[RMDB]
RNA sequence: GGGAACGACUCGAGUAGAGUCGAAAAACUAGGUUUGUACAAGUACAUUCUGAUGUUCACAUAGUGACAAAAUUGCCUAAGGAAGCAUUUCUCAGAAUUUGUUCCUGUGAUUCAGUGAUACAUAACAGUACUUGCAAAUGCCUGUCCAUUUUACAGAUCAUUAGUGAGUCUUCGGACUCACUAAUGAAAAAGAAACAACAACAACAAC
Reactivity to DMS in 0.01 (KOAc 150mM, MgCl2 10mM, bicine 150mM(pH8.5), 24C), signal-to-noise 3, nucleotides 027 to 156: a050c050u000a140g020g020u000u010u000g010u000a060c020a050a050g010u000a030c010a130u000u000c060u000g020a090u010g000u000u000c020a030c000a170u000a090g050u010g010a100c040a060a030a040a300u000u000g000c060c020u020a080a120g040g010a070a100g040c030a040u000u000u000c040u000c110a170g020a050a060u020u000u000g030u000u000c060c010u010g000u000g010a110u000u000c070a110g030u010g010a110u000a050c060a030u000a050a100c080a110g000u000a010c000u000u000g030c010a040a040a090u000g010c010c030u000g020u000c030c070a180u000u000u000u000a150c080a130g000a270
Reactivity to 2A3 in 0.01 (KOAc 150mM, MgCl2 10mM, bicine 150mM(pH8.5), 24C), signal-to-noise 4, nucleotides 027 to 156: a010c070u060a030g020g030u040u070u080g050u100a030c010a010a000g000u020a010c000a060u030u090c020u040g050a050u070g050u120u060c000a010c020a080u230a100g050u060g080a010c030a030a150a040a100u090u100g050c030c030u100a050a020g130g040a060a020g040c010a070u010u100u040c110u020c050a040g120a110a050u030u020u010g010u060u040c020c010u010g020u050g020a070u110u030c010a010g010u030g110a030u070a190c050a070u200a180a030c020a050g000u000a000c000u000u000g000c020a010a070a110u070g030c010c020u020g020u020c000c030a070u030u080u120u060a080c050a010g190a080
Background
Chemical mapping of a 207-nucleotide RNA with DMS and 2A3. The data come from the RNA Mapping Database (RMDB), library OK3TST. Conditions: 150 mM KOAc, 10 mM MgCl2 and 150 mM bicine (pH 8.5), 24 C. For 2A3 the reverse transcriptase was SuperScript II with manganese. The DMS profile rests on 5,121 reads.